Annotation
This 207-nucleotide RNA was probed chemically with 2A3. Reactivities are rounded to 0.1 and cut off at 0 and 3. For 2A3, 605 sequencing reads were counted. It was measured as part of the RMDB library OK3TST. Values cover nucleotides 27 to 156.

[RMDB]
RNA sequence: GGGAACGACUCGAGUAGAGUCGAAAAAUUCGAAUUGUUUACUAUAUCAUGCUGUAUAUAGAUAUACAUGACAGCGGCACUCGUCGCCGAGAACGUGUAUAAAUCAUAUGGCGACGUAAGAGCACUUGAUGGUGUUUCACUUUCAGUCGACGCAGGAGAUCACUGGUCCAUUCGUGGACCAGUGAUCAAAAGAAACAACAACAACAAC
Reactivity to 2A3 in 0.01 (KOAc 150mM, MgCl2 10mM, bicine 150mM(pH8.5), 24C), signal-to-noise 2, nucleotides 027 to 156: a000u110u110c060g010a030a080u110u010g010u010u060u080a080c020u020a030u090a080u250c050a150u100g090c110u050g050u050a050u010a000u010a070g060a020u040a010u040a100c000a060u040g050a020c050a090g060c050g000g080c030a000c020u080c160g100u010c040g000c010c010g040a020g020a040a070c000g030u050g030u010a050u070a130a100a020u130c060a000u080a080u160g060g010c000g010a030c010g000u040a060a050g020a010g020c020a020c090u100u170g070a060u230g080g040u040g010u000u170u070c050a080c050u040u050u040c000a140g000u060c020g000a050c050g030c040a170g000g030a090